The record gives the reactivity of an RNA of 177 nucleotides to DMS and 2A3. For 2A3 the reverse transcriptase was SuperScript II with manganese. 2A3 is a SHAPE reagent: it acylates the 2'-hydroxyl of flexible nucleotides of all four kinds. The RNA was probed in 150 mM KOAc, 10 mM MgCl2 and 150 mM bicine (pH 8.5) at 24 C.
[RMDB]
RNA sequence: GGGAACGACUCGAGUAGAGUCGAAAAACGACACAAUUCGUUGUGUCGUAAUGGAAAAGGCUAGGACGGGCCAGACAAAGGUCCGAAAAGAUCGAAAGAUCACACGCCACGAAUUCGUUCGUGGCAAAGCAUCUCUACAGUUCGCUGUAGAGAUGCUAAAAGAAACAACAACAACAAC
Reactivity to DMS in 0.01 (KOAc 150mM, MgCl2 10mM, bicine 150mM(pH8.5), 24C), signal-to-noise 1, nucleotides 027 to 126: a020c000g010a000c000a010c000a030a010u000u010c240g010u000u000g030u000g000u000c010g030u000a000a050u000g030g000a040a050a120a080g010g050c100u040a090g000g010a170c030g000g000g000c020c020a120g000a100c130a110a070a060g000g000u000c010c000g010a050a030a090a050g010a020u000c000g000a090a050a170g020a010u000c010a140c190a050c200g000c000c000a000c000g000a020a020u010u030c140g030u000u000c000g010u000g010g010c010a000a020
Reactivity to 2A3 in 0.01 (KOAc 150mM, MgCl2 10mM, bicine 150mM(pH8.5), 24C), signal-to-noise 1, nucleotides 027 to 126: a020c010g000a000c020a020c010a040a000u110u100c220g020u070u010g000u000g030u020c010g020u010a030a120u090g010g050a010a040a070a060g090g020c070u070a050g090g020a050c010g010g020g000c020c020a010g050a030c080a000a080a040g020g010u030c000c000g000a020a030a000a020g010a000u010c010g020a010a030a010g020a000u000c000a000c000a010c160g000c000c010a000c000g030a000a020u090u080c210g030u050u000c000g000u020g000g000c010a020a020